Background:
Structure probing data (2A3 and DMS) for a 177-nucleotide construct. The 2A3 profile rests on 3,093 reads. Conditions: 150 mM KOAc, 10 mM MgCl2 and 150 mM bicine (pH 8.5), 24 C. Source: RMDB library OK2TST, as collected in RNAgym.
RNA sequence: GGGAACGACUCGAGUAGAGUCGAAAACAGUUCGUGCUGUAUUGGAAUUAGCUGGUGUAGCAGAUAUUACUUCUAAAUCAUUGGGUUCAAAUACACCAAUCAAUGUGGUUCGUGCGACUAUUGAUGAACCUAUUACGGGGUUCGCCCCGUAAUAGGUAAAAGAAACAACAACAACAAC
Reactivity to 2A3 in 0.01 (KOAc 150mM, MgCl2 10mM, bicine 150mM(pH8.5), 24C), signal-to-noise 3, nucleotides 027 to 126: c010a010g050u090u070c020g060u100g020c020u010g020u040a050u040u070g040g070a110a140u100u040a160g100c060u030g000g000u040g010u020a020g000c070a000g080a070u050a060u120u120a090c050u050u080c020u060a060a120a140u080c030a090u050u120g060g030g010u000u050c030a000a050a100u110a020c040a010c010c010a000a020u070c010a010a060u070g030u050g040g060u050u020c020g050u060g000c000g010a020c030u050a090u140u120g070a090u080g040a020
Reactivity to DMS in 0.01 (KOAc 150mM, MgCl2 10mM, bicine 150mM(pH8.5), 24C), signal-to-noise 4, nucleotides 027 to 126: c050a100g010u000u000c080g020u010g030c060u020g010u000a070u000u000g000g010a060a030u000u000a130g020c170u000g000g010u000g010u010a030g000c120a070g010a150u010a100u000u000a120c120u000u000c010u010a020a110a080u020c030a070u000u000g000g000g010u010u010c060a050a050a060u000a060c040a020c020c030a100a090u010c060a050a070u000g020u000g020g010u000u000c070g010u000g010c050g010a050c060u000a060u000u000g000a090u000g010a110